Structure probing data (DMS and 2A3) for a 177-nucleotide construct. High 2A3 reactivity points to a flexible backbone, as in loops and unpaired stretches. Conditions: 150 mM KOAc, 10 mM MgCl2 and 150 mM bicine (pH 8.5), 24 C. Source: RMDB library M2PK50, as collected in RNAgym.
RNA sequence: GGGAACGACUCGAGUAGAGUCGAAAACACAUUCUAUUCGUAGAAUGUGGAACGUAGAGAGAUCGACAGCGUCGCAGGUAUGUCGAACGAGGAAGAGCGCGCAGGGAUCGGGCUUCGGCCCGAUCAAUCCAAUGUCAGUAUUCGUACUGACAUUGGAAAAAGAAACAACAACAACAAC
Reactivity to DMS in 0.01 (KOAc 150mM, MgCl2 10mM, bicine 150mM(pH8.5), 24C), signal-to-noise 9, nucleotides 027 to 126: c000a000c000a000u000u000c000u000a030u000u010c190g030u000a000g000a010a000u000g020u000g010g010a080a070c140g000u010a080g000a110g000a110g010a080u000c020g010a040c030a050g010c060g020u000c110g020c120a080g000g010u000a050u000g010u000c020g000a030a090c080g010a090g010g010a050a050g000a050g010c040g010c070g010c120a090g010g000g000a010u000c000g010g000g010c000u000u010c210g030g010c000c000c000g000a000u000c010a050a100
Reactivity to 2A3 in 0.01 (KOAc 150mM, MgCl2 10mM, bicine 150mM(pH8.5), 24C), signal-to-noise 6, nucleotides 027 to 126: c000a000c000a000u000u010c000u020a030u040u080c160g100u030a010g010a000a000u000g000u020g010g020a060a020c040g100u170a020g030a010g000a010g000a210u040c020g040a020c020a030g040c030g090u150c070g010c080a040g060g100u180a130u200g040u050c010g020a070a070c040g020a040g050g040a060a030g020a020g030c040g000c010g010c030a030g100g080g000a000u000c000g010g000g000c020u050u080c220g090g000c000c000c010g000a000u000c010a000a000